[RMDB]
RNA sequence: GGGAACGACUCGAGUAGAGUCGAAAAGGAAGCGUAGCCUGUUUCUACUCUGCUCUUAUCUGGUUCCUCUUAUCUCCUUUGGAAUUUAAGUUGGUCCAGGUAAUGCGCUUAUGUAUGCUUGCACGGCCAGGGAGAACUGGUUCGCCAGUUCUCCCUGAAAAGAAACAACAACAACAAC
Reactivity to DMS in 0.01 (KOAc 150mM, MgCl2 10mM, bicine 150mM(pH8.5), 24C), signal-to-noise 1, nucleotides 027 to 126: g010g000a150a090g070c120g020u030a110g020c000c030u020g000u000u000u000c000u010a040c000u000c000u010g000c000u010c030u000u000a000u020c040u000g000g000u020u000c000c000u000c020u020u000a030u000c000u010c010c030u000u030u070g040g000a010a040u030u000u030a020a060g000u040u000g000g000u030c020c000a060g000g020u010a050a020u010g000c060g000c000u030u000a010u030g040u000a020u050g000c040u000u000g030c080a050c060g000g000c090
Reactivity to 2A3 in 0.01 (KOAc 150mM, MgCl2 10mM, bicine 150mM(pH8.5), 24C), signal-to-noise 6, nucleotides 027 to 126: g040g010a060a050g140c090g090u140a040g040c010c000u100g160u020u040u020c010u010a010c010u010c010u010g000c000u000c010u040u010a040u020c010u020g080g000u120u190c000c010u000c000u000u020a010u000c010u020c010c010u080u080u180g050g040a120a080u050u070u050a070a050g050u100u070g020g000u020c010c010a010g000g010u020a030a030u080g020c030g000c040u090u080a070u220g070u020a030u100g030c020u050u070g020c050a030c060g020g020c020
An RNA of 177 nucleotides, treated with DMS and 2A3 and read out base by base. It was measured as part of the RMDB libraries RFM100 and RFMREP. 2A3 adducts were read by reverse transcription with SuperScript II with manganese. The DMS profile rests on 3,367 reads.